[RMDB]
An RNA of 177 nucleotides, treated with DMS and 2A3 and read out base by base. The data come from the RNA Mapping Database (RMDB), libraries RFM100 and RFMREP.
RNA sequence: GGGAACGACUCGAGUAGAGUCGAAAACAUCCGGUCGAUCCUGCCGGAGCGCGACGCUCUCCCCAAGGACGAAGCCAUGCAUGCCCGCUCACCCGGGACGCGGCGGACGGCUCAGGACGACGGUUGCUUACCUUUCGAUAUUCGUAUCGAAAGGUAAAAAAGAAACAACAACAACAAC
Reactivity to DMS in 0.01 (KOAc 150mM, MgCl2 10mM, bicine 150mM(pH8.5), 24C), signal-to-noise 7, nucleotides 027 to 126: c070a070u010c020c010g010g010u000c010g000a100u000c000c000u000g000c040c040g010g000a060g020c060g010c100g010a180c060g020c030u000c040u000c030c000c040c080a120a150g000g010a060c070g000a140a180g000c010c030a090u020g010c090a090u020g000c010c000c010g000c030u000c180a090c170c210c050g000g010g020a060c160g000c040g000g010c020g000g000a130c040g000g000c080u020c060a030g010g000a040c020g010a040c020g000g000u010u010g000c120
Reactivity to 2A3 in 0.01 (KOAc 150mM, MgCl2 10mM, bicine 150mM(pH8.5), 24C), signal-to-noise 7, nucleotides 027 to 126: c020a030u030c010c010g040g080u040c010g060a260u010c000c000u010g020c010c000g030g020a050g060c070g020c030g060a090c050g010c010u010c010u040c000c000c000c020a050a100g050g000a050c040g050a050a010g000c020c010a040u150g050c030a050u190g030c010c020c000g000c020u030c020a050c010c000c000g010g010g000a020c010g000c010g040g000c020g000g060a020c000g010g010c060u080c110a020g010g000a000c010g000a000c010g030g000u020u050g010c030
Conditions: 150 mM KOAc, 10 mM MgCl2 and 150 mM bicine (pH 8.5), 24 C.
2A3 adducts were read by reverse transcription with SuperScript II with manganese.